This 177-nucleotide RNA was probed chemically with 2A3 and DMS. Values cover nucleotides 27 to 126. Conditions: 150 mM KOAc, 10 mM MgCl2 and 150 mM bicine (pH 8.5), 24 C. For DMS, 4,853 sequencing reads were counted. The data come from the RNA Mapping Database (RMDB), library OK2TRN.
[RMDB]
RNA sequence: GGGAACGACUCGAGUAGAGUCGAAAAUUGACGGUGGGGUAGUCUUUACUCCAAUGAGCAUCGAACCACAGCGAAGUGGUUUCAUCGCAAAGAUGCAUUAGUCACGGAGCCACGUAGACAUGGCUAAACCUAAUAGCACGUUCGCGUGCUAUUAGGUAAAAGAAACAACAACAACAAC
Reactivity to 2A3 in 0.01 (KOAc 150mM, MgCl2 10mM, bicine 150mM(pH8.5), 24C), signal-to-noise 3, nucleotides 027 to 126: u070u080g010a000c030g030g020u040g000g000g020g000u020a030g040u040c000u140u250u010a010c010u030c010c000a020a080u130g060a000g020c000a020u000c030g000a040a030c010c010a010c020a020g180c180g190a300a070g010u010g010g000u000u000u070c060a100u090c030g010c120a080a050a020g010a010u030g000c010a020u050u180a030g020u010c010a000c060g050g010a000g020c000c000a020c020g020u050a060g020a140c050a080u020g000g000c010u020a140a050
Reactivity to DMS in 0.01 (KOAc 150mM, MgCl2 10mM, bicine 150mM(pH8.5), 24C), signal-to-noise 5, nucleotides 027 to 126: u000u000g000a030c030g030g010u010g000g010g000g030u000a010g010u010c190u010u010u010a020c010u000c010c010a040a100u000g020a130g000c020a020u000c020g000a030a030c010c010a000c050a120g010c280g010a130a110g010u000g010g010u000u000u000c070a100u010c190g000c200a040a090a120g000a020u000g020c010a140u000u000a050g000u000c030a090c220g000g010a080g010c030c020a030c070g000u000a090g010a080c150a120u000g000g010c010u000a050a120